[RMDB]
Structure probing data (DMS and 2A3) for a 207-nucleotide construct.
The reactions ran in a buffer of 150 mM KOAc, 10 mM MgCl2 and 150 mM bicine (pH 8.5), at 24 C.
2A3 adducts were read by reverse transcription with SuperScript II with manganese.
Values cover nucleotides 27 to 156.
RNA sequence: GGGAACGACUCGAGUAGAGUCGAAAAAGAAUAUCGUAUUACACAAUAUGUGUCAGUCUAGAUGCUGUAGCCACAAAUCUGCUAUCACUUCCUGCUGAUGUCUGCAGAGAACUAAUAAUUCGUUUAAGAGUUGCUAAUCAGGUGAAGAUCCAGCUAGCUAUGUCUGGGUAUUCGUACCCAGACAUAGAAAAGAAACAACAACAACAAC
Reactivity to DMS in 0.01 (KOAc 150mM, MgCl2 10mM, bicine 150mM(pH8.5), 24C), signal-to-noise 2, nucleotides 027 to 156: a080g000a150a120u000a090u000c030g020u010a250u020u010a150c060a080c020a050a070u000a160u000g020u000g020u000c060a080g030u010c030u000a100g000a060u000g020c040u010g050u010a080g040c020c050a200c060a070a050a060u000c060u000g010c030u000a120u000c120a050c070u010u000c030c040u000g030c070u000g060a060u000g000u000c040u010g000c050a060g000a100g020a020a100c020u010a100a120u000a040a150u010u000c010g000u010u010u000a100a120g020a160g010u000u010g010c010u010a080a100u000c060a020g010g020u000g000a060a120g010a110u000c020c030a120g000c040u000a150g010
Reactivity to 2A3 in 0.01 (KOAc 150mM, MgCl2 10mM, bicine 150mM(pH8.5), 24C), signal-to-noise 4, nucleotides 027 to 156: a000g130a020a090u170a050u160c030g010u080a090u190u240a050c060a040c040a080a210u150a140u300g040u020g020u010c020a020g020u010c040u100a020g010a120u100g040c020u050g040u110a020g020c030c000a070c030a020a080a030u040c020u060g040c020u070a030u180c020a030c040u090u020c030c030u040g040c050u030g020a040u060g070u090c060u040g000c010a010g040a000g010a080a000c040u000a020a060u060a120a090u110u060c040g020u080u090u070a050a050g040a040g040u030u040g000c010u030a100a050u040c030a020g010g010u030g040a050a010g020a040u020c020c010a010g070c020u060a020g040